[RMDB]
RNA sequence: GGGAACGACUCGAGUAGAGUCGAAAAUUGCAAAACCGAAACUGUACUAAUCAAGCAGCUCUCCAUCUCCCACCCCUGACACCCAGCCCCUGGCAACCACUAUUCUACUUACUGUCAUAUGAAUUUGGUCACUCUGAGUACCUCAUAUAAGUACAGACGAUAGUAGCAUGUUCGCAUGCUACUAUCGAAAAGAAACAACAACAACAAC
Reactivity to 2A3 in 0.01 (KOAc 150mM, MgCl2 10mM, bicine 150mM(pH8.5), 24C), signal-to-noise 4, nucleotides 027 to 156: u100u130g020c020a040a010a000a050c070c020g030a090a040a000c020u020g030u090a060c020u130a050a150u100c080a110a060g030c010a010g010c050u000c010u020c040c010a070u030c020u030c050c010c000a020c000c000c000c000u010g030a020c010a060c040c030c020a020g030c040c000c000c020u020g020g000c010a030a050c020c020a010c040u090a090u060u070c010u020a110c010u050u060a050c010u020g060u070c000a030u020a020u110g110a120a080u110u160u110g030g000u040c040a020c040u080c070u040g030a030g070u040a030c010c030u030c050a030u070a000u020a130a010g030u030a020c010a030g050a000
Reactivity to DMS in 0.01 (KOAc 150mM, MgCl2 10mM, bicine 150mM(pH8.5), 24C), signal-to-noise 1, nucleotides 027 to 156: u000u000g020c040a070a110a090a090c010c010g020a200a070a100c040u000g000u000a100c060u010a100a080u000c040a050a090g000c020a100g010c020u000c040u000c040c040a040u010c040u000c060c020c000a150c040c030c000c020u000g020a100c080a060c020c000c000a130g000c040c020c010c010u020g000g000c020a070a020c030c040a100c090u000a060u000u000c010u020a080c020u020u000a030c040u010g010u000c060a060u010a070u000g020a070a150u000u000u020g010g020u000c020a100c040u000c060u000g000a140g040u010a070c020c020u000c070a050u000a090u000a060a060g020u000a030c070a030g000a300